[RMDB]
RNA sequence: GGGAACGACUCGAGUAGAGUCGAAAAUUCAGCGCAUUCGUGCGCUGAAAAGGUGUACAACGCAUGUACAGAAAACAAAACAAAAACAAAACAAAAAGCGUAGCAGGGUUCUUUUCGAAGAACCCAAUCAACUUAACGUUUUCGAACGUUAAGUUGAAAAAGAAACAACAACAACAAC
Reactivity to DMS in 0.01 (KOAc 150mM, MgCl2 10mM, bicine 150mM(pH8.5), 24C), signal-to-noise 2, nucleotides 027 to 126: u000u000c000a020g000c000g040c000a030u000u020c140g030u000g020c010g000c000u000g010a000a010a080a130g000g010u000g030u000a010c020a050a060c090g000c070a090u000g020u000a020c020a100g020a040a040a070a110c110a070a020a100a040c090a040a040a040a040a060c080a070a050a030a110c090a060a040a050a110a210g000c040g010u000a080g000c230a110g010g000g000u000u000c000u000u000u000u020c120g000a020a010g000a010a010c000c000c010a010a020
Reactivity to 2A3 in 0.01 (KOAc 150mM, MgCl2 10mM, bicine 150mM(pH8.5), 24C), signal-to-noise 3, nucleotides 027 to 126: u010u000c000a000g000c000g000c010a010u060u060c160g120u030g010c000g000c000u010g000a000a000a000a020g000g030u040g010u030a030c020a070a040c070g000c130a120u040g020u010a020c010a010g080a040a140a010a020c070a040a100a010a000c050a020a120a020a040a020c060a040a100a020a020c040a040a110a040a050a020g030c040g090u100a040g100c160a090g060g000g000u000u000c010u030u050u030u070c130g030a010a020g000a000a010c010c000c000a000a010